Notes
This 207-nucleotide RNA was probed chemically with DMS and 2A3.
[RMDB]
RNA sequence: GGGAACGACUCGAGUAGAGUCGAAAACGUUCUAGUGCGUUGUAGAUUCUUAUCCAAGACUUGUAUCAUUUGAUGAUGCCAUGUGAAUCGCUAGAAACAUGUGAAGUGUAUGGCUAACCCAAUAACGAAAGUUUCGUAAGGGGACUGGAGCAGGCUAUCUAUAUGUCUCGUUCGCGAGACAUAUAGAAAAAGAAACAACAACAACAAC
Reactivity to DMS in 0.01 (KOAc 150mM, MgCl2 10mM, bicine 150mM(pH8.5), 24C), signal-to-noise 2, nucleotides 027 to 156: c040g000u000u000c060u000a130g000u010g010c020g000u000u010g000u010a170g010a200u010u010c050u010u000a110u000c050c000a080a100g020a050c050u010u010g000u010a010u000c020a100u000u000u010g020a100u000g000a120u010g010c030c010a110u000g010u000g010a110a140u000c040g000c030u000a050g010a170a130a120c060a060u010g010u000g010a040a120g020u000g030u000a090u000g010g030c020u010a140a120c000c010c040a020a120u000a070a110c020g000a090a100a100g000u000u000u000c030g010u020a130a170g000g000g020g040a060c060u000g020g000a120g000c030a070g030g000c030u000a080
Reactivity to 2A3 in 0.01 (KOAc 150mM, MgCl2 10mM, bicine 150mM(pH8.5), 24C), signal-to-noise 2, nucleotides 027 to 156: c040g020u060u040c100u150a080g070u020g130c070g030u010u020g040u060a050g000a140u080u040c010u060u080a060u130c080c030a080a000g080a120c030u030u100g010u050a100u090c040a120u060u040u150g180a180u080g000a000u060g000c000c030a030u070g010u000g080a110a080u020c010g000c020u010a020g100a080a120a050c060a070u140g010u040g100a040a040g050u050g000u020a030u020g000g000c020u010a070a080c000c000c010a050a060u070a070a000c010g040a110a060a160g100u070u090u040c030g000u040a060a050g000g000g000g010a000c040u020g010g000a010g020c010a010g040g000c040u010a020

Annotation
High DMS reactivity at an A or C suggests that its Watson-Crick edge is free. The RNA was probed in 150 mM KOAc, 10 mM MgCl2 and 150 mM bicine (pH 8.5) at 24 C. It was measured as part of the RMDB library ARCHII. Reactivities are given for positions 27 through 156. For 2A3 the reverse transcriptase was SuperScript II with manganese.